[RMDB]
RNA sequence: GGGAACGACUCGAGUAGAGUCGAAAAAAAUCUCGCGAGGGAAAUCCCAAGAAGGUCGAGAAGUCUCAAGCUACGAGGGGGGACCCCCGAGACGCUGGAGACGCCCGGGAACAAGGAAAUAGAACAAGCGCGUGACACUUCGGUGUCACGAAAAGAAACAACAACAACAAC
Reactivity to 2A3 in 0.01 (KOAc 150mM, MgCl2 10mM, bicine 150mM(pH8.5), 24C), signal-to-noise 2, nucleotides 027 to 129: a000a000a020u030c030u000c000g020c040g020a070g000g040g010a020a040a050u020c000c000c000a020a050g030a010a010g010g010u010c050g030a000g070a300a050g020u030c010u050c000a010a010g000c010u070a060c060g000a040g040g020g000g010g030g120a130c000c000c000c000c000g020a020g000a000c030g000c020u030g030g000a020g000a040c030g000c030c000c010g000g000g000a000a010c000a010a000g000g010a030a000a020u110a110g040a020a020c080a130a020g070c030g000
Reactivity to DMS in 0.01 (KOAc 150mM, MgCl2 10mM, bicine 150mM(pH8.5), 24C), signal-to-noise 3, nucleotides 027 to 129: a000a000a000u000c030u000c060g050c200g000a250g010g030g020a040a060a180u040c070c010c000a080a080g040a040a060g000g000u020c080g040a100g000a080a100g010u010c040u000c000a110a030g020c080u030a180c070g010a110g020g020g000g050g000g010a140c060c020c000c030c000g010a180g050a040c220g000c000u010g000g020a020g050a030c050g060c010c010c040g000g000g000a020a050c030a040a010g020g020a000a010a010u030a080g020a080a130c070a030a050g020c150g030
This 170-nucleotide RNA was probed chemically with 2A3 and DMS.
Values cover nucleotides 27 to 129.
Source: RMDB library 15KLIB, as collected in RNAgym.
The reactions ran in a buffer of 150 mM KOAc, 10 mM MgCl2 and 150 mM bicine (pH 8.5), at 24 C.
For 2A3 the reverse transcriptase was SuperScript II with manganese.
The 2A3 profile rests on 2,789 reads.